[RMDB]
RNA sequence: GGGAACGACUCGAGUAGAGUCGAAAAGCAGCAGCUGCAGCUGCUCUGCACCGCCUGCGUAGCCGCAGUCAGCGAGGCGCACACUGCGCACGAUGAGCUGGCGGCCCUGGACGCUGAGCUGGCAGUGCUCAACGGGUGACUUCGGUCACCCGUUGAGAAAAGAAACAACAACAACAAC
Reactivity to DMS in 0.01 (KOAc 150mM, MgCl2 10mM, bicine 150mM(pH8.5), 24C), signal-to-noise 1, nucleotides 027 to 126: g010c070a030g000c040a090g030c030u000g000c070a260g010c050u000g050c000u000c050u010g000c000a130c090c160g000c000c000u010g040c030g050u000a160g000c020c010g010c020a070g000u020c020a020g000c020g000a200g050g000c010g000c010a190c230a050c160u000g000c010g040c000a030c010g000a050u000g000a100g000c010u010g010g020c000g020g000c010c120c060u000g000g020a150c060g000c020u000g000a130g020c040u000g000g020c020a010g000u000g000